The record gives the reactivity of an RNA of 177 nucleotides to 2A3 and DMS. Values cover nucleotides 27 to 126. For 2A3, 1,244 sequencing reads were counted. For DMS, 1,197 sequencing reads were counted.
RNA sequence: GGGAACGACUCGAGUAGAGUCGAAAAGAAUAAAAUAGCUGUGUAUCAUCCUGCCCGUCGGUGGAGCCACAGUUAAAUUCAAAAGACAAGGCAGGUAAAGGGACAGUAAAGAUUAGUAACUGUCCAAGACUCGGGAUUAGUUCGCUAAUCCCGAGUCAAAAGAAACAACAACAACAAC
Reactivity to 2A3 in 0.01 (KOAc 150mM, MgCl2 10mM, bicine 150mM(pH8.5), 24C), signal-to-noise 1, nucleotides 027 to 126: g010a050a110u300a050a160a030a030u080a000g000c000u000g020u030g000u140a060u000c000a100u080c100c000u030g050c020c000c000g040u040c050g020g180u160g010g020a000g060c000c000a000c010a050g000u000u020a080a010a000u070u060c030a000a000a180a000g080a000c000a090a020g000g000c000a000g000g020u040a050a000a110g020g000g000a000c000a000g000u000a040a000a080g150a010u110u130a010g070u050a070a000c000u000g050u000c000c000a010a080
Reactivity to DMS in 0.01 (KOAc 150mM, MgCl2 10mM, bicine 150mM(pH8.5), 24C), signal-to-noise 1, nucleotides 027 to 126: g010a020a030u020a020a160a140a100u000a140g000c050u000g050u000g000u040a100u000c040a150u000c000c000u000g000c000c000c150g000u000c210g000g070u000g000g070a070g000c180c030a020c020a000g000u000u000a040a150a060u000u090c060a020a160a120a060g000a070c110a030a100g000g070c050a000g000g000u020a040a120a120g000g000g000a040c000a000g000u000a030a230a150g000a200u020u090a010g000u000a220a040c000u000g000u000c000c000a100a040